[RMDB]
RNA sequence: GGGAACGACUCGAGUAGAGUCGAAAAGAUAUGGAGGGUGAAGUCUUCAACAGCGACACCACUCGGAAACGAGUGUUGUCGACAUGAAGUCACACCCUCCUAAGUCAAAGUACGGUUCGCCGUACAAGCCUAUGACUAGGUUCGCCUAGUCAUAGGCAAAAGAAACAACAACAACAAC
Reactivity to DMS in 0.01 (KOAc 150mM, MgCl2 10mM, bicine 150mM(pH8.5), 24C), signal-to-noise 3, nucleotides 027 to 126: g010a010u000a300u000g000g000a010g000g010g010u010g020a180a110g000u010c000u000u000c000a010a130c300a200g010c010g000a010c000a020c020c000a010c000u000c010g020g000a130a110a170c000g000a020g000u000g010u000u000g010u010c000g000a020c090a300u000g000a020a000g020u000c030a250c000a000c000c000c010u020c010c010u000a000a110g010u000c070a060a080a120g010u010a000c000g020g020u000u000c300g040c000c000g000u000a000c010a080a140
Reactivity to 2A3 in 0.01 (KOAc 150mM, MgCl2 10mM, bicine 150mM(pH8.5), 24C), signal-to-noise 3, nucleotides 027 to 126: g030a000u080a050u170g020g020a000g020g050g000u030g030a300a090g070u050c020u020u010c020a160a160c090a180g060c030g000a000c000a010c010c000a000c000u000c010g010g000a040a060a030c020g000a010g000u000g000u000u000g000u010c000g030a010c000a030u110g000a010a000g020u030c020a000c000a000c060c000c000u000c000c000u000a000a000g000u000c010a000a030a020g020u010a010c010g020g040u050u120c300g000c130c000g000u000a000c000a020a010